[RMDB]
RNA sequence: GGGAACGACUCGAGUAGAGUCGAAAAUAUUGAAUCAAACAGCCGACCAAUUGCACUACCAUCACAAUGGAGAAGCCAGUAGUUAACGUAGACGUAGACCCGCAGAGUCCGUUUGUCGUGCAACUGCAGAUACUUCUUUGUUCGCAAAGAAGUAUCUAAAAGAAACAACAACAACAAC
Reactivity to DMS in 0.01 (KOAc 150mM, MgCl2 10mM, bicine 150mM(pH8.5), 24C), signal-to-noise 9, nucleotides 027 to 126: u030a100u020u010g010a100a130u020c060a070a080a090c100a110g020c020c030g010a090c060c040a050a070u020u010g000c040a060c050u000a090c040c030a070u010c160a070c140a090a080u020g010g010a060g010a100a090g000c060c050a060g020u000a030g010u020u010a050a060c070g010u010a040g000a030c040g010u010a070g010a060c020c030c080g030c130a060g000a100g010u010c020c020g020u010u000u010g000u010c030g010u010g000c100a030a080c030u000g010c140
Reactivity to 2A3 in 0.01 (KOAc 150mM, MgCl2 10mM, bicine 150mM(pH8.5), 24C), signal-to-noise 9, nucleotides 027 to 126: u230a050u050u170g070a040a080u110c060a070a040a090c020a030g040c010c020g050a050c010c030a050a100u050u080g010c020a020c040u090a100c030c010a030u070c030a020c040a090a110u100g040g010a070g020a070a010g050c020c010a020g030u070a010g010u040u060a040a020c030g010u030a030g020a030c010g010u030a030g030a040c010c010c020g040c070a020g010a010g060u010c010c010g010u020u040u050g120u100c030g000u020g030c030a030a040c020u030g000c010